[RMDB]
RNA sequence: GGGAACGACUCGAGUAGAGUCGAAAAGUGGAGGACUAAUGACUCUAGAAAAGUCACCGUGAGUCUGACCAGCACCCCUUCACUCAGAGCUUUCUAUCCGAGGCACGUUAAGGGAGGUGGCUUGAUGACACGGCAGGAUAUUCGUAUCCUGCCGUGUAAAAGAAACAACAACAACAAC
Reactivity to 2A3 in 0.01 (KOAc 150mM, MgCl2 10mM, bicine 150mM(pH8.5), 24C), signal-to-noise 1, nucleotides 027 to 126: g060u020g030g020a090g000g050a020c090u160a090a080u070g020a010c010u000c010u000a050g180a080a130a000a000g040u000c000a000c050c000g040u080g000a020g000u000c000u130g080a180c000c060a030g020c040a100c000c020c000c030u000u060c000a020c020u050c030a020g030a040g170c030u110u220u000c040u080a090u030c030c020g050a030g000g000c030a010c110g030u050u050a030a030g080g010g010a050g060g050u000g010g080c010u110u050g040a090u150g030
Reactivity to DMS in 0.01 (KOAc 150mM, MgCl2 10mM, bicine 150mM(pH8.5), 24C), signal-to-noise 2, nucleotides 027 to 126: g040u000g000g000a300g000g000a150c130u000a100a080u020g000a040c010u010c010u030a140g010a130a070a100a020g000u000c030a030c070c060g020u000g000a040g010u000c000u000g020a200c120c070a120g000c130a110c130c060c010c040u000u000c050a040c020u000c130a130g000a090g000c060u000u000u020c060u000a070u000c070c060g000a040g000g020c070a070c080g020u000u010a050a120g000g020g000a100g020g030u000g000g000c050u040u010g000a120u000g000
The data come from the RNA Mapping Database (RMDB), library OK2TRN. Chemical mapping of a 177-nucleotide RNA with 2A3 and DMS. As a SHAPE reagent, 2A3 marks flexible, mostly unpaired nucleotides at the ribose 2'-OH.